[RMDB]
Description
This 177-nucleotide RNA was probed chemically with 2A3 and DMS. The reactions ran in a buffer of 150 mM KOAc, 10 mM MgCl2 and 150 mM bicine (pH 8.5), at 24 C.
RNA sequence: GGGAACGACUCGAGUAGAGUCGAAAAGGGGUAAGCGGCGGCACCGAGCGACGGGAAUUCACGGAUCCAACUCAACGUCACCGCCGGCCUGGAUUCGAUAUGGGUGACGUAGGCCUCGACCGCCUGAGCGAUCUCUGUAUUUCGAUACAGAGAUCGCAAAAGAAACAACAACAACAAC
Reactivity to 2A3 in 0.01 (KOAc 150mM, MgCl2 10mM, bicine 150mM(pH8.5), 24C), signal-to-noise 3, nucleotides 027 to 126: g110g030g000g030u110a090a010g050c050g030g000c000g020g000c020a000c040c040g010a010g040c030g040a040c050g050g010g170a120a060u080u060c030a030c130g030g020a000u020c020c010a100a080c020u060c160a110a080c020g010u030c040a070c060c040g060c010c000g000g050c000c030u090g040g020a120u050u050c040g040a040u060a110u260g080g000g010u020g020a000c000g020u060a060g010g170c050c030u060c060g080a210c020c000g000c010c010u000g020a000
Reactivity to DMS in 0.01 (KOAc 150mM, MgCl2 10mM, bicine 150mM(pH8.5), 24C), signal-to-noise 2, nucleotides 027 to 126: g000g000g010g070u000a040a020g000c050g000g000c000g000g000c090a120c090c090g020a110g130c110g000a080c120g000g000g010a110a020u010u000c080a090c190g030g000a030u040c040c040a030a050c120u060c180a160a020c020g020u020c060a060c020c000g030c130c090g030g030c030c120u010g010g000a060u020u000c080g070a080u060a090u120g000g000g020u000g020a080c010g020u010a060g000g000c090c030u000c040g000a160c080c010g000c000c000u000g000a110